[RMDB]
RNA sequence: GGGAACGACUCGAGUAGAGUCGAAAAAAGCGAGUCGAGGGAAGCAUGGUGCCUCGAUAAUAAAGUAUGCAUUAAAGAUAAACGCAGAAGAUAAUUUUGCAUUAGCAGCUUAAUUUAGCGCUGCUCAUCCUUCCUCAAUUGCCCACGGUUGAGAGUAUCACGUAGAAAGGUUCGCCUUUCUACGUGAAAAAGAAACAACAACAACAAC
Reactivity to 2A3 in 0.01 (KOAc 150mM, MgCl2 10mM, bicine 150mM(pH8.5), 24C), signal-to-noise 2, nucleotides 027 to 156: a000a000g090c050g010a040g030u060c010g010a040g000g000g020a060a000g020c050a070u100g100g030u100g040c020c040u020c020g020a020u000a020a010u040a000a070a010g040u130a090u100g000c000a030u040u270a180a130a000g050a070u140a060a180a040c070g000c050a000g020a090a000g000a100u120a140a230u150u030u100u020g010c010a010u130u170a000g000c020a000g000c000u050u070a110a020u130u160u130a050g000c010g000c040u000g000c000u010c000a050u020c000c020u020u020c000c010u020c000a050a020u090u090g010c000c010c000a030c170g040g000u000u040g030a060g000a020g040u050a040
Reactivity to DMS in 0.01 (KOAc 150mM, MgCl2 10mM, bicine 150mM(pH8.5), 24C), signal-to-noise 1, nucleotides 027 to 156: a100a100g030c030g060a120g010u010c070g010a300g030g010g010a110a070g000c070a070u000g050g030u010g000c010c050u010c030g010a040u000a050a060u010a100a070a060g000u040a030u000g000c020a240u030u020a040a130a150g000a280u000a050a080a080c150g000c010a050g000a030a050g000a120u020a010a120u000u000u000u000g030c040a150u000u020a070g010c020a050g000c030u000u000a090a120u000u010u000a120g000c080g070c030u010g020c000u000c010a040u000c020c000u000u000c010c000u000c040a010a110u010u020g020c000c000c010a040c050g010g020u000u020g010a090g010a100g000u000a130

This 207-nucleotide RNA was probed chemically with 2A3 and DMS. High 2A3 reactivity points to a flexible backbone, as in loops and unpaired stretches. For 2A3 the reverse transcriptase was SuperScript II with manganese. The reactions ran in a buffer of 150 mM KOAc, 10 mM MgCl2 and 150 mM bicine (pH 8.5), at 24 C. The DMS profile rests on 2,184 reads. Values are in units of 0.01, from 0 to 300, in steps of 10. Values cover nucleotides 27 to 156.